[RMDB]
RNA sequence: GGGAACGACUCGAGUAGAGUCGAAAAUAAAAGGGUUUCUGCCGUGAGUGGCACACGGAGGAGGCACCACGUGCUCUAUCCGUGCGGAAUCGACAUCAAGAGAUUUCGGAAGCAUAAUUUUUGGCGACGAGAACUAUGCGUUCGCGCAUAGUUCUCGAAAAGAAACAACAACAACAAC
Reactivity to DMS in 0.01 (KOAc 150mM, MgCl2 10mM, bicine 150mM(pH8.5), 24C), signal-to-noise 1, nucleotides 027 to 126: u060a020a060a230a110g000g050g010u000u000u000c000u000g020c020c000g000u070g000a070g000u000g000g000c060a010c010a000c000g000g000a120g000g090a050g010g000c000a010c010c150a130c290g000u000g010c150u000c000u090a050u000c000c000g060u000g000c000g000g000a000a000u000c000g000a210c270a130u100c300a100a150g080a300g000a000u000u000u000c000g000g000a000a000g070c060a000u150a000a230u010u010u010u010u010g000g000c010g000a270
Reactivity to 2A3 in 0.01 (KOAc 150mM, MgCl2 10mM, bicine 150mM(pH8.5), 24C), signal-to-noise 2, nucleotides 027 to 126: u190a010a000a010a030g140g010g000u010u010u010c020u000g000c000c000g030u070g120a120g120u300g010g010c000a000c000a000c010g010g020a010g000g020a000g160g090c040a010c080c010a040c210g040u040g000c020u010c000u030a300u000c000c000g000u010g000c000g000g000a000a000u040c020g070a070c120a230u170c020a040a100g060a000g000a040u000u000u000c000g000g000a000a000g000c010a010u100a300a290u010u020u000u020u090g050g050c060g000a160